[RMDB]
RNA sequence: GGGAACGACUCGAGUAGAGUCGAAAAUUCUAAAUCAUGGCUUUAUAAGGAACACGAUAUUAGGCAAAGAAUCGAAUCCCUUCGUGAGCGUCAAAUAACAGCAAAUGUAGUCUCAAAACCCAAGAAACUAAGUGUUACACUUCGGUGUAACACUUAGAAAAGAAACAACAACAACAAC
Reactivity to DMS in 0.01 (KOAc 150mM, MgCl2 10mM, bicine 150mM(pH8.5), 24C), signal-to-noise 4, nucleotides 027 to 126: u030u010c020u020a060a050a020u050c070a040u020g000g010c000u010u020u020a070u040a090a120g040g020a100a090c080a110c040g010a030u020a090u020u020a080g000g020c190a040a110a100g010a060a040u020c020g000a130a120u020c010c030c020u000u000c040g010u020g000a050g030c080g020u000c020a050a040a030u020a040a040c070a090g000c080a010a070a080u020g010u010a030g010u000c020u000c100a020a060a060a090c010c000c010a060a110g000a120a040a130
Reactivity to 2A3 in 0.01 (KOAc 150mM, MgCl2 10mM, bicine 150mM(pH8.5), 24C), signal-to-noise 5, nucleotides 027 to 126: u060u010c020u050a020a030a030u120c040a040u110g100g000c040u090u070u060a090u090a170a110g120g000a110a020c060a010c160g040a040u030a080u170u150a040g030g000c050a120a030a090g040a050a100u060c020g010a000a030u030c010c010c000u000u030c010g050u030g060a020g060c030g050u040c020a030a100a060u130a120a070c020a030g020c010a000a090a050u040g010u030a070g000u010c010u010c060a090a140a060a060c000c000c010a030a000g050a060a050a000

Chemical mapping of a 177-nucleotide RNA with DMS and 2A3.
The reactions ran in a buffer of 150 mM KOAc, 10 mM MgCl2 and 150 mM bicine (pH 8.5), at 24 C.
The DMS profile rests on 5,659 reads.
It was measured as part of the RMDB library OK1LIB.